[RMDB]
RNA sequence: GGGAACGACUCGAGUAGAGUCGAAAAGGUGGUGUGCGUGGUGCCACGGUGUCGUGGAAGGCACGCGUAGGCCGAGUGUGAGUGGGUGCGCAAGUGGGUGCGCGAAUGCGCGGGGCGUGCGAGGUGACGACAUUAUUCAGUUCGCUGAAUAAUGUCGAAAAGAAACAACAACAACAAC
Reactivity to DMS in 0.01 (KOAc 150mM, MgCl2 10mM, bicine 150mM(pH8.5), 24C), signal-to-noise 3, nucleotides 027 to 126: g000g040u000g020g020u000g030u000g000c060g030u000g010g000u000g030c000c010a050c040g000g020u010g020u000c020g010u000g010g020a160a120g010g010c010a020c000g010c020g010u000a080g020g000c020c010g000a120g010u010g000u010g000a150g010u000g010g000g010u010g010c080g010c080a060a100g010u010g010g010g010u000g020c040g020c010g000a050a060u020g010c020g020c040g000g000g000g010c080g000u000g000c080g010a110g000g020u000g010a250
Reactivity to 2A3 in 0.01 (KOAc 150mM, MgCl2 10mM, bicine 150mM(pH8.5), 24C), signal-to-noise 3, nucleotides 027 to 126: g090g010u050g050g020u030g030u050g050c050g030u070g010g090u120g030c010c010a010c030g000g070u230g020u060c010g030u060g120g140a160a100g090g000c020a020c010g090c010g030u040a050g030g000c000c000g000a070g010u120g000u020g000a040g050u120g000g040g010u080g000c040g030c040a060a010g060u060g040g030g030u060g030c030g010c000g040a250a150u230g000c040g020c020g030g000g000g010c060g010u070g010c000g010a060g000g060u060g020a030
Description
The record gives the reactivity of an RNA of 177 nucleotides to DMS and 2A3. For DMS, 4,351 sequencing reads were counted. The reactions ran in a buffer of 150 mM KOAc, 10 mM MgCl2 and 150 mM bicine (pH 8.5), at 24 C. 2A3 adducts were read by reverse transcription with SuperScript II with manganese. It was measured as part of the RMDB library RFMREP.